[RMDB]
RNA sequence: GGGAACGACUCGAGUAGAGUCGAAAAGCCGUCAGCCAGCGAGGUUGAGACUAGGAACCCCGUUCGCAGCGAAGAGUCCAGGCAAGCCACCAGCACCAACUCUCCUGGCUGUAUCCAGGUAGAGAUCUUCAACUUUUCAUUUACCACGACGCAGUCGCGGUACUGUUGAGUUCGCUCAACAGUACCGAAAAGAAACAACAACAACAAC
Reactivity to 2A3 in 0.01 (KOAc 150mM, MgCl2 10mM, bicine 150mM(pH8.5), 24C), signal-to-noise 4, nucleotides 027 to 156: g060c010c010g070u060c020a010g030c030c000a040g050c070g100a050g000g020u030u030g040a030g040a100c070u100a070g090g010a020a060c000c010c000c020g030u070u090c050g020c100a070g020c020g030a060a020g040a060g050u020c050c010a010g020g030c070a080a020g020c010c020a050c000c010a020g000c040a030c020c020a060a060c000u000c000u010c090c000u010g020g000c020u020g010u010a030u040c010c010a020g000g030u180a000g030a020g020a090u050c040u160u070c100a110a110c070u120u050u100u100c070a130u060u090u200a100c030c020a010c080g080a010c040g070c230a050g010u040c010g000
Reactivity to DMS in 0.01 (KOAc 150mM, MgCl2 10mM, bicine 150mM(pH8.5), 24C), signal-to-noise 2, nucleotides 027 to 156: g000c000c040g000u000c020a080g040c000c010a110g040c080g010a110g030g000u000u010g010a100g010a070c020u000a110g040g030a060a100c030c010c000c020g000u000u000c050g050c040a140g050c050g000a130a090g000a090g010u000c040c030a080g020g000c080a100a130g000c040c040a080c040c050a120g000c030a100c040c030a070a100c030u000c010u040c010c010u000g000g030c040u000g010u010a050u020c030c010a050g000g030u000a060g000a090g000a070u000c020u010u000c060a070a050c030u000u000u010u000c020a120u020u000u000a030c040c030a070c050g020a100c030g030c050a090g050u000c060g000